[RMDB]
The record gives the reactivity of an RNA of 177 nucleotides to 2A3 and DMS. 2A3 adducts were read by reverse transcription with SuperScript II with manganese. Reactivities are rounded to 0.1 and cut off at 0 and 3. The RNA was probed in 150 mM KOAc, 10 mM MgCl2 and 150 mM bicine (pH 8.5) at 24 C.
RNA sequence: GGGAACGACUCGAGUAGAGUCGAAAAAGCCGUCGUCAUACGUGACGACGGCAACGCCCCACGGGAAGUAUUACCGUGGGGCAGCAAGGUAGCGGUAGCAAGCGUCAUGACUACGGUCAUGACGCAAUCCAUCGUGUUAUUUCGAUAACACGAUGGAAAAAGAAACAACAACAACAAC
Reactivity to 2A3 in 0.01 (KOAc 150mM, MgCl2 10mM, bicine 150mM(pH8.5), 24C), signal-to-noise 3, nucleotides 027 to 126: a010g030c000c000g030u030c000g020u000c010a020u010a080c240g090u040g000a000c000g000a000c010g020g020c010a000a000c000g000c000c000c000c000a000c000g010g000g060a130a080g170u240a190u210u280a120c000c010g000u000g000g000g050g020c000a000g020c000a040a010g080g070u080a020g060c040g020g100u100a060g050c060a150a020g000c010g010u000c000a000u000g010a000c000u010a010c270g100g000u010c010a000u000g000a010c000g000c000a000a000
Reactivity to DMS in 0.01 (KOAc 150mM, MgCl2 10mM, bicine 150mM(pH8.5), 24C), signal-to-noise 1, nucleotides 027 to 126: a070g000c030c010g040u000c000g080u070c010a150u010a080c060g030u010g010a020c000g090a020c000g000g000c060a010a060c160g050c000c000c000c000a020c000g020g000g020a190a110g050u040a100u030u020a110c010c000g010u000g000g000g010g000c050a000g000c140a060a240g000g000u010a110g060c150g000g000u010a050g040c210a040a000g000c000g000u010c010a000u000g000a030c000u010a190c300g020g000u010c000a020u000g000a010c020g030c000a000a010